[RMDB]
RNA sequence: GGGAACGACUCGAGUAGAGUCGAAAAAACGUUGCAUGAUCGUAAAACAUGCCCGGCUUACCGUGAGCCGCCUUUGAAAGAAAGGUUUAUACGGACUCUGUUGCGUUACGCACGUACCUAACUUGUGAAAACGGCAUCUUGUUCGCAAGAUGCCGAAGUAAGCACAGACGUUCGCGUCUGUGCUUACAAAAGAAACAACAACAACAAC
Reactivity to 2A3 in 0.01 (KOAc 150mM, MgCl2 10mM, bicine 150mM(pH8.5), 24C), signal-to-noise 1, nucleotides 027 to 156: a000a000c000g000u000u000g000c000a000u000g060a090u100c010g060u120a080a040a000a040c000a000u000g020c020c000c000g000g000c000u000u030a040c000c000g050u000g020a000g030c000c000g050c020c000u040u000u000g120a030a000a020g040a000a000a000g010g000u060u010u060a020u020a010c010g080g060a240c010u000c100u170g050u120u050g030c020g020u050u030a070c130g000c010a020c010g000u020a100c000c010u040a080a110c040u100u080g020u050g240a060a050a000a000c000g000g000c000a000u000c000u010u000g020u040u080c120g000c130a000a000g000a000u040g000c000c000g000a010a010
Conditions: 150 mM KOAc, 10 mM MgCl2 and 150 mM bicine (pH 8.5), 24 C. This 207-nucleotide RNA was probed chemically with 2A3. Source: RMDB library M2RFOK, as collected in RNAgym. For 2A3, 647 sequencing reads were counted.